[RMDB]
The record gives the reactivity of an RNA of 207 nucleotides to DMS and 2A3. 2A3 is a SHAPE reagent: it acylates the 2'-hydroxyl of flexible nucleotides of all four kinds. The reactions ran in a buffer of 150 mM KOAc, 10 mM MgCl2 and 150 mM bicine (pH 8.5), at 24 C. 2A3 adducts were read by reverse transcription with SuperScript II with manganese. For DMS the reverse transcriptase was MarathonRT.
RNA sequence: GGGAACGACUCGAGUAGAGUCGAAAAGGCGAUCGAGAGGCCCUCUCAUUAAUGCGGAGUUGUCACGCUGACAGAAUGAUAUUAGAUGUCCGCUUCCGGUUGCAUCGCGGCGAUGAUUACAUAGGACAUCGAUUACCCAUUUGCUUCGGGGAAGCAAACUAUAUAGCCGGUUCGCCGGCUAUAUAGUAAAAGAAACAACAACAACAAC
Reactivity to DMS in 0.01 (KOAc 150mM, MgCl2 10mM, bicine 150mM(pH8.5), 24C), signal-to-noise 2, nucleotides 027 to 156: g020g020c010g010a130u000c020g010a140g000a140g100g010c010c010c030u000c030u010c060a100u000u000a050a180u020g010c020g020g000a160g000u000u000g030u000c050a100c030g030c030u010g030a240c060a070g000a080a060u000g020a080u000a090u000u000a130g010a050u000g030u010c010c000g030c070u000u000c040c020g000g040u000u020g030c040a090u000c020g000c070g010g020c050g030a070u010g000a160u000u000a090c070a080u000a100g010g010a030c010a020u000c000g000a090u010u000a090c010c000c040a140u000u000u000g000c010u000u010c020g000g000g030g010a060a110g010c020a070a070
Reactivity to 2A3 in 0.01 (KOAc 150mM, MgCl2 10mM, bicine 150mM(pH8.5), 24C), signal-to-noise 2, nucleotides 027 to 156: g030g010c030g040a070u030c040g000a060g000a050g280g030c010c020c010u000c000u000c000a140u080u150a150a100u250g000c010g010g020a040g060u040u040g020u100c030a010c060g050c010u020g010a010c010a040g160a080a090u090g080a040u060a110u210u110a110g000a060u040g000u040c020c020g000c000u060u000c040c030g050g000u040u030g050c030a020u060c030g050c060g080g020c050g040a020u020g040a070u110u080a110c080a100u160a080g060g000a000c000a020u010c000g000a000u000u110a070c010c000c010a050u060u010u050g000c000u030u020c060g100g030g000g010a000a000g030c000a030a030